RNA sequence: GGGAACGACUCGAGUAGAGUCGAAAACGUACAGUAGCUGAUCAUGCGAAAUAUCUUCUUCAGCUUCUGGAUAAAAUCAUUGAAGGAGAUGUGGAUUCGGAAUUUCUUCGUGAAAUUGGCGCCAAUACGUAAUAAUACGGUUCGCCGUAUUAUUACGAAAAGAAACAACAACAACAAC
Reactivity to DMS in 0.01 (KOAc 150mM, MgCl2 10mM, bicine 150mM(pH8.5), 24C), signal-to-noise 9, nucleotides 027 to 126: c070g020u000a100c060a040g010u000a050g020c010u000g010a030u000c060a060u010g010c070g000a090a120a100u000a060u010c010u000u000c020u000u000c000a010g010c080u000u010c080u000g000g010a140u010a040a050a060a280u010c060a050u000u010g010a050a040g000g000a030g010a060u000g010u010g010g010a180u000u010c080g010g010a090a060u000u010u000c020u000u000c090g010u000g000a020a040a110u000u000g000g010c050g020c060c070a060a070u010a110
Reactivity to 2A3 in 0.01 (KOAc 150mM, MgCl2 10mM, bicine 150mM(pH8.5), 24C), signal-to-noise 9, nucleotides 027 to 126: c030g030u090a040c020a050g030u060a020g010c020u010g010a040u050c030a060u160g040c020g030a040a040a020u170a040u020c020u040u000c000u000u000c010a020g030c000u100u040c050u180g040g000a040u140a110a140a010a040u090c040a060u040u170g020a030a010g020g020a040g000a030u030g030u060g070g080a120u150u110c070g070g040a060a050u060u030u030c010u040u060c070g040u040g100a050a060a080u050u030g050g010c010g020c030c020a050a030u140a070
Structure probing data (DMS and 2A3) for a 177-nucleotide construct. The RNA was probed in 150 mM KOAc, 10 mM MgCl2 and 150 mM bicine (pH 8.5) at 24 C. The 2A3 profile rests on 17,288 reads. The data come from the RNA Mapping Database (RMDB), library OK2TRN.